[RMDB]
RNA sequence: GGGAACGACUCGAGUAGAGUCGAAAAGAAAAGACGAUGUUAUUAUGAUUCUCGAGUAAUAGCAGGUCAUGCGUACUACUCGCCGAACGGAAGGCCGACUGUUCGCGCAAUGAAACGAGAAAGAAAAAUUAAUGGGACCUUUCGAGGUCCCAUUAAUAAAAGAAACAACAACAACAAC
Reactivity to DMS in 0.01 (KOAc 150mM, MgCl2 10mM, bicine 150mM(pH8.5), 24C), signal-to-noise 3, nucleotides 027 to 126: g010a100a110a070a100g030a030c040g010a070u010g010u010u030a020u010u010a040u020g000a090u000u050c000u010c020g010a300g000u010a010a050u010a020g000c020a080g010g060u010c050a080u000g000c040g020u020a130c050u000a060c080u020c030g000c190c040g000a020a020c020g030g040a050a150g010g010c060c030g010a170c010u010g020u000u000c020g050c130g000c070a200a100u030g010a020a080a070c030g000a000g010a050a080a090g000a040a070a060a100
Reactivity to 2A3 in 0.01 (KOAc 150mM, MgCl2 10mM, bicine 150mM(pH8.5), 24C), signal-to-noise 3, nucleotides 027 to 126: g040a010a140a000a000g040a010c060g050a110u020g000u010u000a030u000u020a040u110g100a170u110u010c040u020c010g010a010g040u010a000a070u000a000g000c000a020g020g040u060c030a080u200g000c010g060u050a030c030u020a030c000u010c030g040c060c000g040a050a000c020g030g030a050a110g110g040c020c000g080a010c030u040g000u010u070c010g000c020g000c090a070a190u150g160a140a070a050c060g010a000g060a030a120a030g110a000a080a010a080